Structure probing data (DMS and 2A3) for a 177-nucleotide construct. The DMS profile rests on 5,677 reads. Conditions: 150 mM KOAc, 10 mM MgCl2 and 150 mM bicine (pH 8.5), 24 C. High 2A3 reactivity points to a flexible backbone, as in loops and unpaired stretches. The data come from the RNA Mapping Database (RMDB), library M2PK50. Reactivities are given for positions 27 through 126. 2A3 adducts were read by reverse transcription with SuperScript II with manganese.
RNA sequence: GGGAACGACUCGAGUAGAGUCGAAAACACACGUGCUUCGGCACGUGUGAAACCUAGUCAAAUUAACGCAAGACUAGGAAAGCGUAAGUACGAAAGUACAAAAAAGGUGAGUGUUCGCACUCACCAAGUAUAUUUAAUACUUCGGUAUUAAAUAUACAAAAGAAACAACAACAACAAC
Reactivity to DMS in 0.01 (KOAc 150mM, MgCl2 10mM, bicine 150mM(pH8.5), 24C), signal-to-noise 5, nucleotides 027 to 126: c000a020c000a010c010g010u000g020c000u000u010c210g030g020c010a010c000g010u000g010u010g000a030a100a110c000c000u000a010g010u000c010a060a130a130u020u000a110a120c210g010c140a080a160g000a020c000u000a010g010g000a040a040a140g010c130g020u010a080a150g010u000a000c000g000a120a070a220g010u000a010c010a010a060a090a060a100a080g000g020u000g000a010g010u000g020u000u010c210g020c000a010c000u000c000a000c000c000a000a050
Reactivity to 2A3 in 0.01 (KOAc 150mM, MgCl2 10mM, bicine 150mM(pH8.5), 24C), signal-to-noise 5, nucleotides 027 to 126: c010a010c000a010c000g000u000g010c010u050u050c100g130g000c010a000c000g010u000g000u010g000a000a000a010c010c000u010a000g020u020c020a010a130a300u200u140a220a060c090g020c110a120a080g000a000c000u010a020g010g000a020a070a000g030c030g120u120a100a140g010u000a020c000g030a150a030a020g000u010a010c000a050a110a000a030a020a010g000g000u010g000a000g000u010g020u060u160c220g030c070a000c000u000c010a000c000c000a000a000

The 2A3 profile rests on 10,694 reads.